[RMDB]
RNA sequence: GGGAACGACUCGAGUAGAGUCGAAAAGCCAGAGUCCGCCGUGCGGGGUCCAUCUCAGGCUCUCGAGGAGGGGAGGAUGCUCCUGGAGAGACGACCAUUCCUCCGACGGGGGCGUGUGUCCCUCUGGGUCUGGGAAUAAUUUCGAUUAUUCCCAGACAAAAGAAACAACAACAACAAC
Reactivity to DMS in 0.01 (KOAc 150mM, MgCl2 10mM, bicine 150mM(pH8.5), 24C), signal-to-noise 5, nucleotides 027 to 126: g010c020c010a050g000a070g010u000c020c010g020c010c090g020u010g000c030g020g010g000g010u000c160c110a060u000c050u000c110a190g020g010c010u000c010u000c010g010a170g000g000a030g010g000g000g000a100g010g000a190u000g020c020u000c000c010u000g010g010a070g010a020g000a060c050g010a090c110c100a160u000u010c060c000u000c010c000g010a070c050g000g000g000g010g010c020g000u010g000u010g000u000c000c010c000u000c020u010g000g000
Reactivity to 2A3 in 0.01 (KOAc 150mM, MgCl2 10mM, bicine 150mM(pH8.5), 24C), signal-to-noise 3, nucleotides 027 to 126: g020c000c010a010g020a010g080u040c030c050g070c090c080g230u130g150c020g020g040g010g040u040c050c020a110u080c060u020c100a030g100g000c000u000c000u010c020g080a030g000g020a020g000g060g020g020a080g100g030a080u150g050c010u010c020c010u060g030g010a130g000a010g010a050c010g020a040c010c030a060u120u090c010c010u030c020c000g060a080c020g000g000g000g000g010c030g000u050g030u020g010u010c000c010c000u010c020u020g060g000

An RNA of 177 nucleotides, treated with DMS and 2A3 and read out base by base. For 2A3, 5,234 sequencing reads were counted. For DMS the reverse transcriptase was MarathonRT. The DMS profile rests on 8,003 reads. Source: RMDB library OK2TST, as collected in RNAgym. 2A3 is a SHAPE reagent: it acylates the 2'-hydroxyl of flexible nucleotides of all four kinds.